Chemical mapping of a 177-nucleotide RNA with DMS and 2A3.
RNA sequence: GGGAACGACUCGAGUAGAGUCGAAAACAAUCUAAGCAAAAAUGUGAUCUUGCUUGUAAAUACAUUUUUGAGAGGUUAAUAAAUUACAAGUAGUGCUAUUUUUGUCCCUCUCUGCAAUAAAAUUAAAGUGUGAAGUUAGAUUCGUCUAACUUCACACAAAAGAAACAACAACAACAAC
Reactivity to DMS in 0.01 (KOAc 150mM, MgCl2 10mM, bicine 150mM(pH8.5), 24C), signal-to-noise 1, nucleotides 027 to 126: c090a120a090u000c100u030a070a170g010c030a000a000a010a020a010u000g040u010g010a150u010c120u030u010g000c000u000u000g000u000a010a070a060u010a140c100a050u000u000u010u010u000g000a010g030a030g010g010u000u000a050a040u010a050a050a070u000u010a000c000a000a020g010u010a080g010u000g000c020u010a010u000u000u000u000u000g000u010c140c000c010u000c030u000c010u000g030c130a070a090u020a050a080a060a030u010u010a020a070a090
Reactivity to 2A3 in 0.01 (KOAc 150mM, MgCl2 10mM, bicine 150mM(pH8.5), 24C), signal-to-noise 2, nucleotides 027 to 126: c010a010a020u170c040u240a030a120g000c060a030a020a010a020a060u290g300u050g300a300u080c010u020u030g020c010u000u010g000u000a010a020a000u150a020c030a050u080u070u000u100u090g040a010g000a000g030g000u040u100a090a000u060a020a190a090u100u000a000c000a030a030g030u030a030g070u080g080c000u020a060u000u000u000u030u010g050u080c000c020c000u000c000u000c000u000g060c000a090a210u160a250a200a010a060u230u150a080a110a030
For 2A3 the reverse transcriptase was SuperScript II with manganese. The reactions ran in a buffer of 150 mM KOAc, 10 mM MgCl2 and 150 mM bicine (pH 8.5), at 24 C. For 2A3, 919 sequencing reads were counted.